An RNA of 177 nucleotides, treated with DMS and read out base by base. Conditions: 150 mM KOAc, 10 mM MgCl2 and 150 mM bicine (pH 8.5), 24 C. It was measured as part of the RMDB library TTRINS. DMS (dimethyl sulfate) methylates the pairing face of unpaired adenines and cytosines. For DMS the reverse transcriptase was MarathonRT.
RNA sequence: GGGAACGACUCGAGUAGAGUCGAAAAGAUAUGGAAUACUACGUUAUUUCCAUGUCUUCAACAGCUAUUCGGUCGGAAACGACCGAUAGACAUGAAGGCAUGGAAAUAACGUAGUAUUCCUAAGUCACGCUUUAAUACAGUUCGCUGUAUUAAAGCGAAAAGAAACAACAACAACAAC
Reactivity to DMS in 0.01 (KOAc 150mM, MgCl2 10mM, bicine 150mM(pH8.5), 24C), signal-to-noise 2, nucleotides 027 to 126: g010a080u000a300u000g000g000a010a000u000a000c000u000a000c010g010u010u000a020u000u000u000c000c000a010u020g000u000c000u000u010c000a050a110c300a170g000c000u000a000u020u010c020g020g020u000c000g000g010a130a120a290c010g010a010c000c010g000a000u000a010g000a030c120a230u000g010a010a010g000g010c000a010u000g010g000a010a000a000u000a000a000c000g000u000a000g010u000a000u000u000c000c000u000a020a070g020u000c060a290